Structure probing data (2A3 and DMS) for a 177-nucleotide construct. Reactivities are rounded to 0.1 and cut off at 0 and 3. The 2A3 profile rests on 369 reads. The reactions ran in a buffer of 150 mM KOAc, 10 mM MgCl2 and 150 mM bicine (pH 8.5), at 24 C. DMS adducts were read by reverse transcription with MarathonRT.
RNA sequence: GGGAACGACUCGAGUAGAGUCGAAAAGAAAGUGUCUUACCGUUGUGAAUAUUGAGGCAUAUCGAAUCGGCGAGUCAUCGUUUCGGUCGUCCUUUGUUUGGUUGGCGAUACGAUUGUUACUCUUCUAUAAAAACUCCUAGUUCGCUAGGAGUUUUUAAAAAGAAACAACAACAACAAC
Reactivity to 2A3 in 0.01 (KOAc 150mM, MgCl2 10mM, bicine 150mM(pH8.5), 24C), signal-to-noise 1, nucleotides 027 to 126: g050a000a080a000g120u020g020u020c000u000u040a040c050c020g180u000u100g040u070g020a080a010u050a110u070u130g070a020g030g000c010a020u070a030u070c010g000a020a000u050c040g010g000c020g020a060g030u110c050a020u010c080g000u020u050u000c010g000g000u000c060g000u000c000c050u060u030u100g110u040u040u090g050g000u030u160g000g000c020g080a010u000a100c020g020a160u120u050g000u070u060a080c010u050c000u050u120c090u050a010
Reactivity to DMS in 0.01 (KOAc 150mM, MgCl2 10mM, bicine 150mM(pH8.5), 24C), signal-to-noise 3, nucleotides 027 to 126: g030a090a090a110g010u000g010u000c020u010u000a080c090c080g030u000u000g030u050g010a090a050u020a090u010u010g010a050g000g000c040a030u000a060u000c020g000a060a100u010c030g010g000c040g000a050g020u010c060a070u000c060g000u010u010u000c020g020g010u000c020g010u000c020c000u000u010u010g000u010u020u030g000g020u010u000g020g000c060g020a050u020a040c080g010a080u000u010g010u030u000a050c120u000c020u010u000c040u010a160